[RMDB]
RNA sequence: GGGAACGACUCGAGUAGAGUCGAAAAAUUUCAAAUCAUACAAAAUAGGAUUAGUCUGCCCAUUUUCUAUAUACGUAAGCGCUAUUUCUGAAGAAUAGCUUAUUUGAUCAUGGCAAAGGCACGGCUAACUCUUCCUCAUGUUCGCAUGAGGAAGAGUAAAAGAAACAACAACAACAAC
Reactivity to DMS in 0.01 (KOAc 150mM, MgCl2 10mM, bicine 150mM(pH8.5), 24C), signal-to-noise 2, nucleotides 027 to 126: a130u000u000u000c080a060a100a090u040c060a090u040a060c120a100a070a140a110u040a070g010g000a070u030u000a030g030u000c020u010g000c040c020c150a070u010u000u000u010c020u000a040u020a070u030a060c150g000u030a000a000g040c250g000c060u020a010u000u000u000c010u030g070a190a140g000a000a010u000a010g000c010u000u000a030u000u000u000g010a090u000c120a020u000g010g000c170a010a050a040g010g000c040a000c070g050g020c020u000a040
Reactivity to 2A3 in 0.01 (KOAc 150mM, MgCl2 10mM, bicine 150mM(pH8.5), 24C), signal-to-noise 3, nucleotides 027 to 126: a000u070u060u010c020a030a090a070u070c020a010u120a150c060a030a230a050a050u150a140g050g040a040u040u000a000g020u020c010u020g000c030c020c000a010u040u000u000u000c030u010a070u010a050u020a060c110g060u060a050a000g010c020g000c110u030a010u060u140u050c100u160g180a110a100g050a030a050u020a000g000c010u000u000a010u030u060u070g040a020u020c010a000u030g040g000c040a040a030a080g050g000c000a010c030g010g000c000u000a030
Record summary:
This 177-nucleotide RNA was probed chemically with DMS and 2A3. Conditions: 150 mM KOAc, 10 mM MgCl2 and 150 mM bicine (pH 8.5), 24 C. Values are in units of 0.01, from 0 to 300, in steps of 10. For 2A3 the reverse transcriptase was SuperScript II with manganese.